[RMDB]
RNA sequence: GGGAACGACUCGAGUAGAGUCGAAAAGAGGGCCGUCGACACGCGCACCUCCUCGCGGCUGCGAACCAUCUUGUUGGCCUCGAGCGGCGGAAUCAUUAUGGCCGGGUCGAUCUCCCGCACGGUGUGCCGGCCGAAUAUAGUUCGCUAUAUUCGGCCGAAAAGAAACAACAACAACAAC
Reactivity to 2A3 in 0.01 (KOAc 150mM, MgCl2 10mM, bicine 150mM(pH8.5), 24C), signal-to-noise 3, nucleotides 027 to 126: g050a040g010g010g030c050c020g020u040c080g110a040c040a020c140g140c000g000c080a300c020c010u000c000c000u000c020g000c050g010g000c020u060g000c010g030a040a040c060c010a150u090c060u140u200g080u070u240g040g010c040c010u000c010g040a020g000c050g030g000c010g010g110a040a070u150c100a090u120u280a080u250g070g010c000c000g030g010g000u030c000g010a080u030c010u010c060c000c010g020c010a020c100g120g040u110g020u060g090c000
Reactivity to DMS in 0.01 (KOAc 150mM, MgCl2 10mM, bicine 150mM(pH8.5), 24C), signal-to-noise 2, nucleotides 027 to 126: g000a070g010g000g000c040c060g000u000c160g010a100c170a050c060g000c130g000c010a090c010c020u010c010c010u020c050g020c130g000g040c030u010g020c040g000a020a100c090c090a030u000c260u000u000g000u000u000g000g030c060c000u000c060g000a070g000c080g010g000c020g000g010a130a090u020c090a080u000u020a070u000g020g000c000c020g020g000g000u010c000g010a040u000c120u000c000c060c010g020c100a040c090g000g010u010g000u000g030c060